Source information: Structure probing data (DMS and 2A3) for a 207-nucleotide construct. Conditions: 150 mM KOAc, 10 mM MgCl2 and 150 mM bicine (pH 8.5), 24 C. Reactivities are rounded to 0.1 and cut off at 0 and 3. The data come from the RNA Mapping Database (RMDB), library OK3TST.
RNA sequence: GGGAACGACUCGAGUAGAGUCGAAAAUGAAGAUCGAAUUUGGGGAGGUAUUUCCGGGAAUUGGAAUGGGCUACGAGGAGGUUCCUAAGCAGCGGCUGUUACAGGCACUCAUGACAGUGGAGGAAAAUCCAUUAGAAGCAGUUAAUCUCGACUUCGAACCACCGAUAUAGUUCGCUAUAUCGGUGGUAAAAGAAACAACAACAACAAC
Reactivity to DMS in 0.01 (KOAc 150mM, MgCl2 10mM, bicine 150mM(pH8.5), 24C), signal-to-noise 1, nucleotides 027 to 156: u000g020a090a140g000a090u010c030g000a110a090u000u020u000g030g020g020g040a100g050g010u000a040u010u010u000c030c030g030g030g000a030a100u000u000g000g000a060a050u000g010g000g040c020u000a070c070g010a130g000g010a070g030g020u000u000c020c000u000a080a070g010c020a090g020c050g040g040c020u000g000u000u000a100c040a130g000g020c060a060c030u010c030a110u000g000a100c030a070g040u000g000g000a080g030g010a050a080a060a160u010c050c020a090u000u000a070g030a060a070g040c030a090g020u000u000a060a120u000c010u020c020g000a110c020u000u000c010g000a200
Reactivity to 2A3 in 0.01 (KOAc 150mM, MgCl2 10mM, bicine 150mM(pH8.5), 24C), signal-to-noise 2, nucleotides 027 to 156: u110g000a000a020g040a100u070c030g000a010a070u020u050u090g010g020g000g000a030g040g010u050a080u030u090u050c040c020g000g000g080a020a050u110u100g020g030a000a110u080g020g010g000c010u030a020c120g020a020g020g030a010g000g020u050u000c010c000u020a050a000g020c010a000g010c010g050g000c020u040g020u080u050a030c010a010g010g000c020a020c060u010c020a060u080g010a080c010a030g000u010g020g050a030g010g040a010a040a030a110u040c030c000a050u090u100a050g010a060a010g000c020a000g010u050u170a060a060u000c020u010c060g110a130c000u050u050c030g000a030